[RMDB]
RNA sequence: GGGAACGACUCGAGUAGAGUCGAAAAACGGAUGGUACGCCAUCCGACCAUUGGGUAGAAGCGUUCAAUCAGCACCGUGACGAUGCAGAUGGGAAAUUGCCCAUGAUACGCACCAUACGUGGUGCGAAAAAGCCAUCGGUGUUCGCACCGAUGGCAAGCUGUUCCUAACGUUCGCGUUAGGAACAGCAAAAGAAACAACAACAACAAC
Reactivity to 2A3 in 0.01 (KOAc 150mM, MgCl2 10mM, bicine 150mM(pH8.5), 24C), signal-to-noise 1, nucleotides 027 to 156: a000c020g000g010a000u020g000g020u020a000c180g120c060c000a000u010c000c000g010a000c000c000a030u000u080g060g000g000u090a070g060a120a000g070c050g060u110u000c000a030a030u000c020a010g000c010a000c030c020g110u180g110a050c150g000a010u030g020c020a070g010a130u030g000g000g090a000a000a250u150u080g000c000c000c000a010u150g070a010u000a040c000g000c000a000c000c000a000u030a170c300g040u090g020g040u010g000c030g000a040a000a000a000a000g000c000c000a000u030c000g020g000u010g000u050u140c200g050c030a000c000c000g000a000u000g000g000c000a000a000

This 207-nucleotide RNA was probed chemically with 2A3. The reactions ran in a buffer of 150 mM KOAc, 10 mM MgCl2 and 150 mM bicine (pH 8.5), at 24 C. The 2A3 profile rests on 680 reads. Reactivities are given for positions 27 through 156.